[RMDB]
RNA sequence: GGGAACGACUCGAGUAGAGUCGAAAAUGGGCUUUGCGUUAGAUGAUUUUGCCCAACUGUAGGCUAAUGUAAGUGCUCUGAACAUGUUUAAGGUAGGCUAAGCUAAGCUGUGAUGUUUGGUAAGUUAACUCUCUCAGAUAUUCGUAUCUGAGAGAGUAAAAGAAACAACAACAACAAC
Reactivity to DMS in 0.01 (KOAc 150mM, MgCl2 10mM, bicine 150mM(pH8.5), 24C), signal-to-noise 9, nucleotides 027 to 126: u000g020g000g010c010u000u010u000g010c050g020u000u000a050g010a070u010g000a150u000u000u010u000g010c020c020c040a070a100c110u000g000u010a080g010g010c020u010a030a050u000g010u000a030a050g020u010g000c030u010c020u000g000a090a090c100a070u000g010u000u000u010a080a080g010g010u000a060g010g010c040u000a060a100g010c040u000a060a060g010c030u000g010u010g010a080u000g010u000u000u000g010g010u010a070a090g010u000u000a090
Reactivity to 2A3 in 0.01 (KOAc 150mM, MgCl2 10mM, bicine 150mM(pH8.5), 24C), signal-to-noise 2, nucleotides 027 to 126: u040g000g030g000c000u050u030u070g020c020g040u050u060a060g020a130u130g030a080u040u070u150u200g020c010c020c020a000a030c050u090g060u110a030g120g000c010u000a030a050u080g030u060a060a030g030u030g080c000u000c000u060g030a040a030c030a040u100g110u050u120u060a080a020g100g000u030a020g070g020c030u010a040a060g050c010u010a040a000g030c020u070g020u070g080a070u120g020u050u030u020g030g000u040a070a070g000u030u110a040